[RMDB]
This 207-nucleotide RNA was probed chemically with DMS and 2A3. Source: RMDB library OK3TST, as collected in RNAgym.
RNA sequence: GGGAACGACUCGAGUAGAGUCGAAAAGGCAUCUGCAUAAGCAGCAAACUGGCCCUCCAGUCAGAUGUAAGCCUCUUAGGCCCUCUCAUCUUUGAUGGACUUGUUGAAGAAAGAUUCUGGGUAUAUCUUCCAAAACCAGAGAUUGCUACCUGUGCACCGUUGAUUACAGUUUCGACUGUAAUCAACGAAAAGAAACAACAACAACAAC
Reactivity to DMS in 0.01 (KOAc 150mM, MgCl2 10mM, bicine 150mM(pH8.5), 24C), signal-to-noise 1, nucleotides 027 to 156: g030g000c040a070u010c000u000g040c010a110u000a070a130g020c030a040g010c050a030a050a140c040u000g020g020c030c040c060u030c080c050a130g010u010c030a000g000a070u000g030u000a020a090g030c010c000u010c120u000u000a130g030g030c020c010c010u020c070u030c060a090u020c030u010u010u000g020a140u000g000g010a060c100u030u010g010u000u000g000a090a080g010a050a070a100g000a110u000u000c060u010g010g020g000u000a060u000a090u010c010u070u000c030c020a040a070a100a080c010c000a030g010a090g010a150u000u000g030c010u000a050c050c010u000g020u000g020c010a100c090
Reactivity to 2A3 in 0.01 (KOAc 150mM, MgCl2 10mM, bicine 150mM(pH8.5), 24C), signal-to-noise 2, nucleotides 027 to 156: g050g000c040a080u050c060u100g020c030a030u070a300a010g010c000a010g000c020a080a040a120c040u050g040g000c040c000c030u080c030c000a030g060u030c030a010g020a040u010g010u080a050a050g020c010c010u020c070u080u180a040g050g000c000c030c000u020c020u000c000a100u050c000u070u100u120g050a040u050g060g020a030c030u090u080g010u080u090g070a040a070g040a040a160a010g040a090u140u000c050u150g010g000g060u060a080u050a060u130c040u070u060c030c060a010a040a070a090c030c000a000g000a040g020a150u000u060g000c020u060a060c030c010u070g010u050g010c030a040c040